RNA sequence: GGGAACGACUCGAGUAGAGUCGAAAAUUCAUCUUCAUCGCCGCUGCUCAUUGGGGAAGCCUCGUAGUUAUUACGGCUCAUUUUUUCCCUAGAUGGCAGAAGAGCAUAUACAGUCAUGUCAUGAACUGACUGGGGAAGUAAACCUUUCCCAAUCAUGCGGUAUAUAUUCGUUCGCGAAUAUAUACCGAAAAGAAACAACAACAACAAC
Reactivity to DMS in 0.01 (KOAc 150mM, MgCl2 10mM, bicine 150mM(pH8.5), 24C), signal-to-noise 2, nucleotides 027 to 156: u000u020c070a100u000c060u000u010c110a090u010c000g020c000c020g020c000u000g000c020u010c010a070u010u000g020g020g010g030a100a090g020c020c030u010c020g000u000a050g010u000u000a110u000u010a020c020g000g010c010u000c080a060u010u010u000u000u000u000c020c000c000u000a110g030a110u000g010g020c050a070g000a010a050g000a150g040c010a200u010a120u010a130c060a140g020u010c030a070u000g010u000c080a080u020g010a070a140c060u010g000a040c000u010g020g010g020g040a000a030g000u000a090a120a170c190c040u000u000u010c030c040c020a020a090u000c010a080u000g010
Reactivity to 2A3 in 0.01 (KOAc 150mM, MgCl2 10mM, bicine 150mM(pH8.5), 24C), signal-to-noise 7, nucleotides 027 to 156: u060u030c010a080u030c050u190u090c050a160u130c110g010c020c010g030c020u030g010c030u050c210a040u050u050g020g000g000g000a040a010g000c010c040u110c090g030u020a040g090u130u290a200u300u060a070c010g030g010c030u020c070a150u060u110u070u020u100u060c010c000c000u040a120g010a090u040g010g000c010a000g010a060a030g030a010g000c030a040u140a020u030a160c000a010g010u010c010a020u060g000u020c010a010u030g020a060a050c020u010g020a010c010u010g020g000g000g020a060a110g020u100a120a140a120c000c010u000u010u020c000c000c000a010a100u030c010a010u030g020
An RNA of 207 nucleotides, treated with DMS and 2A3 and read out base by base. The DMS profile rests on 4,335 reads. Reactivities are rounded to 0.1 and cut off at 0 and 3. 2A3 is a SHAPE reagent: it acylates the 2'-hydroxyl of flexible nucleotides of all four kinds. DMS adducts were read by reverse transcription with MarathonRT. For 2A3, 5,676 sequencing reads were counted.